[RMDB]
RNA sequence: GGGAACGACUCGAGUAGAGUCGAAAAGAUAUGGAUACUGGUAGAGCAACAGCAGGUCGGUCGGAAACGACCGCCUGACAUGCUUGUACAGUAUCCUAAGUCAAAGAUUGAGCUUCGGCUCAAUCAAUCAUAUCUUUCUGUUCGCAGAAAGAUAUGAAAAAGAAACAACAACAACAAC
Reactivity to 2A3 in 0.01 (KOAc 150mM, MgCl2 10mM, bicine 150mM(pH8.5), 24C), signal-to-noise 6, nucleotides 027 to 126: g020a020u090a020u180g000g010a010u010a010c000u030g020g140u270a070g020a010g050c020a020a180c070a180g090c000a030g000g150u300c150g020g000u000c010g010g050a100a080a060c030g000a000c000c010g000c000c000u000g030a010c000a010u060g030c000u050u060g110u300a030c000a010g000u000a000u000c000c010u000a040a000g040u000c030a000a070a180g000a000u010u000g000a000g020c010u070u160c300g080g000c000u010c000a000a000u000c010a000a050
Reactivity to DMS in 0.01 (KOAc 150mM, MgCl2 10mM, bicine 150mM(pH8.5), 24C), signal-to-noise 8, nucleotides 027 to 126: g010a060u010a300u010g010g000a010u000a000c010u010g000g010u020a300g000a010g010c000a030a090c300a200g020c000a010g000g000u020c050g070g000u000c000g000g000a120a100a180c010g010a010c000c010g020c010c000u010g000a010c110a170u000g000c000u010u000g000u000a300c000a010g000u000a000u000c000c000u000a020a100g010u000c030a140a130a160g000a010u000u000g000a020g010c000u000u020c260g040g000c000u000c000a010a000u000c000a120a130